[RMDB]
RNA sequence: GGGAACGACUCGAGUAGAGUCGAAAAGCAGUGUGCCAGCACAAGAAGGCGCAAGCGCAAAGGAAGGGAUGGGGACCGACAGGGAAGGUCUGCAGUGCGUGUGGAAGAUCAUAGACUAUGGGCAUGCGAGAAGGGUUCUAUUCGUAGAACCCUUCUCAAAAGAAACAACAACAACAAC
Reactivity to 2A3 in 0.01 (KOAc 150mM, MgCl2 10mM, bicine 150mM(pH8.5), 24C), signal-to-noise 1, nucleotides 027 to 126: g050c050a050g060u000g000u020g120c000c020a070g080c070a080c030a170a120g100a080a080g030g050c040g000c070a060a030g050c030g000c070a080a090a040g050g040a060a040g020g030g010a040u050g020g000g060g010a020c040c000g030a020c030a020g000g050g060a050a010g020g000u010c000u040g000c010a010g010u060g050c030g020u080g020u050g060g000a060a000g030a030u040c000a060u040a010g050a020c020u050a090u080g010g000g030c020a020u050g000c010
Reactivity to DMS in 0.01 (KOAc 150mM, MgCl2 10mM, bicine 150mM(pH8.5), 24C), signal-to-noise 3, nucleotides 027 to 126: g000c010a100g030u010g020u010g020c010c030a110g010c090a120c160a080a150g000a160a110g000g000c050g020c050a060a100g020c110g000c090a040a070a080g000g010a110a060g030g000g000a080u000g020g010g000g010a060c050c050g010a130c170a100g020g010g000a090a080g000g000u000c040u000g020c070a110g020u000g040c070g000u010g010u030g020g020a090a060g010a080u000c070a010u010a100g010a070c070u000a060u000g010g010g010c040a070u000g000c190